RNA sequence: GGGAACGACUCGAGUAGAGUCGAAAACUGUAUUCAGUGCUCUGAUCGCCGCAUAUGCAUGACCAUCGGAAAUUCACUGAUUGUUCUCUACAGGCACAGGCGAGGGCAUUCGGGGCAACAUCAACUCCCUUUUACUAGCCUUCGGGCUAGUAAAAGGAAAAGAAACAACAACAACAAC
Reactivity to 2A3 in 0.01 (KOAc 150mM, MgCl2 10mM, bicine 150mM(pH8.5), 24C), signal-to-noise 6, nucleotides 027 to 126: c080u100g040u180a180u100u110c040a030g020u000g020c010u010c020u040g180a160u050c040g000c080c040g010c040a060u090a040u240g030c050a030u090g010a030c000c020a020u050c010g070g030a030a070a070u290u120c080a060c050u020g000a050u060u040g010u070u020c050u010c010u040a060c050a080g060g010c030a030c020a040g050g000c010g020a070g020g010g040c030a020u040u080c070g010g000g010g030c040a050a030c010a150u200c030a040a070c050u130c000
Reactivity to DMS in 0.01 (KOAc 150mM, MgCl2 10mM, bicine 150mM(pH8.5), 24C), signal-to-noise 2, nucleotides 027 to 126: c090u000g010u030a030u010u000c060a020g000u000g010c070u000c030u010g010a050u000c090g050c060c040g020c100a090u010a080u070g000c070a050u000g040a020c060c200a000u020c110g000g010a000a020a090u030u030c080a040c050u080g000a030u020u000g020u000u020c070u000c090u000a060c050a110g020g040c050a020c110a050g000g010c020g000a090g000g000g000c040a060u020u020c030g050g030g030g010c030a020a060c130a000u030c050a160a070c110u050c050